Chemical mapping of a 177-nucleotide RNA with 2A3 and DMS.
High DMS reactivity at an A or C suggests that its Watson-Crick edge is free.
For DMS the reverse transcriptase was MarathonRT.
The data come from the RNA Mapping Database (RMDB), library OK2TRN.
The reactions ran in a buffer of 150 mM KOAc, 10 mM MgCl2 and 150 mM bicine (pH 8.5), at 24 C.
RNA sequence: GGGAACGACUCGAGUAGAGUCGAAAACGAUCGAGGACGGGAUCUUUGAAGUCAAGGCCACCGCCGGUGACACCCAUUUGGGUGGAGAGGAUUUCGACAACCGCCUUGUCGAUUUCUGCAUCCAGGAAAAUGGUCAGAGAUUCGUCUCUGACCAUUUAAAAGAAACAACAACAACAAC
Reactivity to 2A3 in 0.01 (KOAc 150mM, MgCl2 10mM, bicine 150mM(pH8.5), 24C), signal-to-noise 2, nucleotides 027 to 126: c000g030a040u120c030g020a030g050g050a050c040g040g000g010a030u010c070u060u020u230g080a120a040g060u090c030a040a050g020g000c000c070a020c020c020g060c010c040g030g050u070g010a020c010a050c030c010c010a110u160u180u170g100g010g000u060g020g020a050g020a020g030g060a080u030u030u000c000g000a000c030a070a020c070c060g080c040c050u000u020g010u000c000g040a010u030u020u070c000u020g060c020a030u000c030c010a010g000g140a060
Reactivity to DMS in 0.01 (KOAc 150mM, MgCl2 10mM, bicine 150mM(pH8.5), 24C), signal-to-noise 4, nucleotides 027 to 126: c130g000a040u000c030g010a050g010g010a060c050g010g020g000a100u010c040u010u010u010g000a100a080g020u000c040a130a100g010g020c040c080a110c130c060g020c070c050g010g030u000g010a110c060a120c050c000c010a230u000u010u000g010g000g010u000g000g000a050g000a150g000g010a050u000u000u000c000g000a020c030a010a090c090c120g010c090c120u000u010g010u000c010g020a030u000u000u000c030u000g010c070a140u010c020c020a050g010g000a060